[RMDB]
RNA sequence: GGGAACGACUCGAGUAGAGUCGAAAAAGGCUUGCGGCGGUCGCGGCUGGAAUCCUGUGGGCUCUGUAUGUCUGCGCCAGAGGCAAAGAUUUGUUGUCGACGCCGGGCAGCAAUAUUCGAUGUCUGCCCAACAAGGGCAUUUCGAUGCCCUUGUUGGAAAAGAAACAACAACAACAAC
Reactivity to 2A3 in 0.01 (KOAc 150mM, MgCl2 10mM, bicine 150mM(pH8.5), 24C), signal-to-noise 1, nucleotides 027 to 126: a050g060g020c020u060u110g060c060g110g080c050g100g100u210c040g000c030g000g010c010u000g080g020a060a060u100c000c000u040g010u080g050g000g070c040u010c030u080g070u190a150u210g050u010c010u070g020c030g060c030c040a060g020a060g110g000c020a040a040a040g060a010u070u060u160g030u030u040g030u060c000g010a100c080g050c040c000g000g030g020c000a030g000c000a020a020u100a110u260u110c020g050a000u020g040u010c000u010g010c030
Reactivity to DMS in 0.01 (KOAc 150mM, MgCl2 10mM, bicine 150mM(pH8.5), 24C), signal-to-noise 2, nucleotides 027 to 126: a100g010g000c030u000u000g010c030g020g020c090g010g010u020c070g020c080g030g000c010u000g030g000a070a070u000c000c020u010g030u010g020g000g020c030u000c030u010g010u010a040u010g010u020c050u000g010c100g010c070c050a110g010a120g000g000c030a040a110a270g010a040u000u010u010g020u010u010g010u000c010g010a120c140g020c030c060g000g010g000c010a040g000c010a050a050u000a080u000u010c050g010a230u000g000u000c000u010g010c170